[RMDB]
RNA sequence: GGGAACGACUCGAGUAGAGUCGAAAAAAACCGUGCGCUUACAAUCCGUCAGAGCCUGCGCCACUUUGGUGGGUGGGUGAUGGCGUGCCUUUUGAAGAAUGAGCCUGCGAGUUAGCGGCAUGUCGCGGAAUACAGUAACGUUCGCGUUACUGUAUUCAAAAGAAACAACAACAACAAC
Reactivity to 2A3 in 0.01 (KOAc 150mM, MgCl2 10mM, bicine 150mM(pH8.5), 24C), signal-to-noise 2, nucleotides 027 to 126: a000a000a000c020c010g010u050g010c040g000c000u040u060a050c020a050a100u070c030c010g010u000c000a000g010a010g030c000c010u020g000c070g300c010c020a020c020u160u160u220g200g010u010g000g000g000u010g000g010g000u040g020a040u000g000g000c010g000u020g020c000c010u130u170u070u120g110a080a030g040a060a060u080g000a020g030c030c030u040g010c040g020a150g080u050u090a030g020c020g010g020c060a060u140g070u100c030g000c030g090
Reactivity to DMS in 0.01 (KOAc 150mM, MgCl2 10mM, bicine 150mM(pH8.5), 24C), signal-to-noise 5, nucleotides 027 to 126: a040a050a030c030c000g020u000g000c290g010c010u000u010a070c080a080a070u010c090c010g010u000c000a010g000a300g000c010c010u000g010c010g010c000c010a010c010u000u010u010g040g010u000g010g000g030u000g010g000g010u000g000a160u000g000g010c000g000u010g010c160c070u000u000u000u000g020a070a060g010a090a160u000g010a090g020c010c020u010g030c020g000a120g010u000u010a110g020c040g000g000c090a060u010g000u000c030g000c060g000
The record gives the reactivity of an RNA of 177 nucleotides to 2A3 and DMS. The reactions ran in a buffer of 150 mM KOAc, 10 mM MgCl2 and 150 mM bicine (pH 8.5), at 24 C. For 2A3, 4,456 sequencing reads were counted. For DMS the reverse transcriptase was MarathonRT. It was measured as part of the RMDB library RFMREP. 2A3 adducts were read by reverse transcription with SuperScript II with manganese.